[RMDB]
RNA sequence: GGGAACGACUCGAGUAGAGUCGAAAAUAGCAACUCCACAUAAGAUGGUUUUGUCUGUUUCUCCUUACGUUUGUAAUGCCCCUGGUUGUGGCGUUUCAGACGUUACUAAGCUAUAUUUAGGUGGUAUGAACCGUUAGCUUCGGCUAACGGAAAAGAAACAACAACAACAAC
Reactivity to 2A3 in 0.01 (KOAc 150mM, MgCl2 10mM, bicine 150mM(pH8.5), 24C), signal-to-noise 5, nucleotides 027 to 129: u080a010g000c020a010a000c000u010c000c000a010c050a100u290a050a070g250a300u040g010g020u010u000u000u000g140u100c000u010g070u020u010u000c060u000c000c000u050u100a010c010g020u000u010u020g010u040a000a000u010g000c000c000c000c000u070g270g010u100u100g050u040g000g010c000g000u020u000u020c000a010g000a000c000g010u000u000a020c030u070a050a080g080c020u020a020u020a140u300u140u130a060g030g020u110g030g030u090a090u200g090a120a050
Reactivity to DMS in 0.01 (KOAc 150mM, MgCl2 10mM, bicine 150mM(pH8.5), 24C), signal-to-noise 5, nucleotides 027 to 129: u030a080g020c040a030a040c010u030c020c000a060c060a260u090a110a070g010a130u020g030g000u010u010u000u050g000u060c000u010g030u020u010u010c110u040c050c060u040u060a020c020g050u000u000u000g000u000a030a010u010g020c010c010c030c070u020g010g060u000u000g040u000g010g030c060g050u040u030u020c030a030g020a050c030g000u000u030a040c070u040a050a070g030c140u030a010u070a120u090u070u010a060g020g020u000g000g040u050a040u000g040a130a120

Conditions: 150 mM KOAc, 10 mM MgCl2 and 150 mM bicine (pH 8.5), 24 C. An RNA of 170 nucleotides, treated with 2A3 and DMS and read out base by base. For 2A3, 6,337 sequencing reads were counted. 2A3 adducts were read by reverse transcription with SuperScript II with manganese. The data come from the RNA Mapping Database (RMDB), library 15KLIB. In probing experiments dimethyl sulfate is read out at A N1 and C N3, which are open when not base-paired. Values cover nucleotides 27 to 129.